An RNA of 177 nucleotides, treated with DMS and 2A3 and read out base by base. For 2A3, 1,070 sequencing reads were counted. For DMS the reverse transcriptase was MarathonRT. 2A3 is a SHAPE reagent: it acylates the 2'-hydroxyl of flexible nucleotides of all four kinds. It was measured as part of the RMDB library OK2TRN. The DMS profile rests on 771 reads.
[RMDB]
RNA sequence: GGGAACGACUCGAGUAGAGUCGAAAAACCACACGGUUCAAGCAGGUCACUGACUUUCUUUCGGCAGCUACCACAACUCAUAUUUCAUUGGAUCAUCAUUCGAUGACGCUUACGCCGGAUGAGGUUAGCACUAGACGUUGUUCGCAACGUCUAGUGCAAAAGAAACAACAACAACAAC
Reactivity to DMS in 0.01 (KOAc 150mM, MgCl2 10mM, bicine 150mM(pH8.5), 24C), signal-to-noise 1, nucleotides 027 to 126: a060c010c060a050c080a070c110g000g020u010u000c080a080a080g000c100a100g020g010u040c080a180c080u000g000a060c000u000u000u020c020u000u000u000c020g000g030c040a080g010c070u000a120c080c040a040c150a050a050c180u000c110a050u020a060u000u010u000c060a080u000u020g020g000a030u000c110a110u000c100a120u000u000c060g000a020u020g000a070c210g020c170u010u030a080c160g000c040c010g000g020a000u000g020a010g000g020u040u000a050
Reactivity to 2A3 in 0.01 (KOAc 150mM, MgCl2 10mM, bicine 150mM(pH8.5), 24C), signal-to-noise 2, nucleotides 027 to 126: a000c040c010a050c000a020c060g020g030u100u090c040a050a000g010c000a020g040g090u030c010a030c120u020g080a070c080u160u240u140c040u000u110u020c020g060g000c000a000g050c010u060a050c000c010a060c070a130a100c000u030c140a120u030a200u160u190u080c050a050u060u060g080g040a080u020c000a030u000c010a030u100u100c060g020a070u010g080a060c020g010c070u100u090a060c140g060c010c030g000g050a010u000g020a010g140g000u060u060a000